Chemical mapping of a 207-nucleotide RNA with 2A3 and DMS.
[RMDB]
RNA sequence: GGGAACGACUCGAGUAGAGUCGAAAACAGCCUUCUGGAGUAUGCAGAAGGUUUGACAAAGGCUGUCGUGGGGCUAAAUGAAUGUGAUCAUCCAGAGAUAAAUAAGGAGAAGAAAAGCUAUGGAUUCCUUCAAAAUGAAUGAAAAUCAGAUUUGAUAUCCUGGUCAUUUAUUCGUAAAUGACCAGGAAAAAGAAACAACAACAACAAC
Reactivity to 2A3 in 0.01 (KOAc 150mM, MgCl2 10mM, bicine 150mM(pH8.5), 24C), signal-to-noise 1, nucleotides 027 to 156: c020a000g000c010c010u000u000c000u000g040g020a140g200u170a050u220g000c000a000g000a000a000g020g000u010u040u020g000a000c020a000a040a000g000g000c030u000g020u040c020g010u020g000g020g000g000c010u020a050a050a050u070g040a070a020u080g050u090g010a030u040c040a010u020c010c010a020g000a000g010a060u080a070a100a010u120a080a010g030g000a010g060a060a010g020a000a090a010a000g000c000u000a020u000g020g050a020u030u030c010c000u000u010c010a050a080a070a030u120g020a030a020u140g040a060a070a080a000u290c010a010g040a300u250u220u220g120a140u170a040
Reactivity to DMS in 0.01 (KOAc 150mM, MgCl2 10mM, bicine 150mM(pH8.5), 24C), signal-to-noise 2, nucleotides 027 to 156: c030a150g000c000c010u010u000c000u000g010g010a300g010u000a090u020g000c020a040g030a060a020g000g020u000u000u010g020a180c060a180a070a100g010g040c000u000g040u010c070g040u010g010g000g010g010c050u010a030a080a080u010g010a120a070u000g000u000g020a150u010c040a060u000c020c020a070g010a130g060a130u010a010a100a180u000a040a080g010g020a080g020a060a060g000a060a110a080a110g000c020u010a040u000g000g000a170u000u000c040c020u000u000c020a000a080a060a110u000g010a040a040u000g010a090a110a120a150u000c020a070g000a140u020u010u020g010a060u000a180

The RNA was probed in 150 mM KOAc, 10 mM MgCl2 and 150 mM bicine (pH 8.5) at 24 C. For DMS the reverse transcriptase was MarathonRT.